[RMDB]
RNA sequence: GGGAACGACUCGAGUAGAGUCGAAAAUUAUGUUGAGGAGUGUUUAUGAAAUGACAAAAAUAUCAAAAAUAAUAGACGAACUGAACAAUCAACAAGCUGAUGCAGCAUGGAUUACAACACCGUUGAACCUUGGAUAUGUAUUCGUACAUAUCCAAGGAAAAGAAACAACAACAACAAC
Reactivity to 2A3 in 0.01 (KOAc 150mM, MgCl2 10mM, bicine 150mM(pH8.5), 24C), signal-to-noise 2, nucleotides 027 to 126: u080u020a060u150g020u030u050g030a000g050g040a100g050u050g020u020u050u010a030u050g060a000a090a080u030g000a000c040a000a230a060a060a030u140a030u110c050a050a120a080a010a080u140a100a040u070a030g020a030c040g020a060a010c020u040g000a030a020c050a050a090u080c010a030a100c010a070a030g000c010u050g030a090u080g050c030a020g020c010a030u050g010g000a010u060u070a050c020a070a010c040a050c090c020g020u020u090g020a030a040
Reactivity to DMS in 0.01 (KOAc 150mM, MgCl2 10mM, bicine 150mM(pH8.5), 24C), signal-to-noise 3, nucleotides 027 to 126: u030u010a070u010g000u010u000g010a090g000g000a110g010u000g000u000u000u000a040u000g000a120a130a070u010g010a110c070a030a100a060a090a070u020a120u000c010a020a060a030a050a100u000a070a060u040a110g000a030c040g010a060a050c060u010g020a050a060c080a040a090u000c050a030a060c030a070a080g000c040u000g010a080u010g010c060a050g010c030a050u000g000g010a120u000u000a070c120a020a060c160a060c100c120g020u000u000g010a050a130
The record gives the reactivity of an RNA of 177 nucleotides to 2A3 and DMS. The DMS profile rests on 2,511 reads. Values cover nucleotides 27 to 126.